[RMDB]
RNA sequence: GGGAACGACUCGAGUAGAGUCGAAAACAUGACAGCCUGCUCUUGCAACUCCAUGCGAGCCUUAUCAGAAGCACUAGCCUCAAGCGGUGCACGUUCUUGCUCCAAAGAGCGUAAAGCAGCCUCGCGCCACCACCUUUAACUUCGGUUAAAGGUGGUGAAAAGAAACAACAACAACAAC
Reactivity to 2A3 in 0.01 (KOAc 150mM, MgCl2 10mM, bicine 150mM(pH8.5), 24C), signal-to-noise 3, nucleotides 027 to 126: c050a070u160g060a030c030a010g020c010c020u020g020c000u000c010u030u070g010c020a030a050c010u000c030c020a050u080g030c010g010a010g000c010c010u140u100a120u150c060a040g060a170a000g020c010a010c020u090a080g020c000c040u220c100a090a030g000c020g000g000u020g000c010a000c010g010u000u000c010u000u030g020c030u000c090c000a070a030a000g010a010g000c020g000u040a050a030a020g050c030a010g020c010c010u030c040g030c010g030c030
Reactivity to DMS in 0.01 (KOAc 150mM, MgCl2 10mM, bicine 150mM(pH8.5), 24C), signal-to-noise 3, nucleotides 027 to 126: c100a070u000g010a050c070a090g020c030c020u000g020c040u010c030u010u010g030c060a060a070c070u000c020c050a100u010g020c060g020a080g010c070c050u000u000a100u010c110a120g010a120a140g010c010a030c050u000a060g030c030c040u000c160a100a280g010c010g000g000u000g000c050a060c040g010u010u010c010u000u000g000c110u010c140c090a050a050a040g010a010g010c010g000u000a060a040a080g000c070a060g000c120c000u000c060g000c030g010c190
The data come from the RNA Mapping Database (RMDB), library OK2TST. Structure probing data (2A3 and DMS) for a 177-nucleotide construct. Values cover nucleotides 27 to 126. For DMS the reverse transcriptase was MarathonRT. In probing experiments dimethyl sulfate is read out at A N1 and C N3, which are open when not base-paired.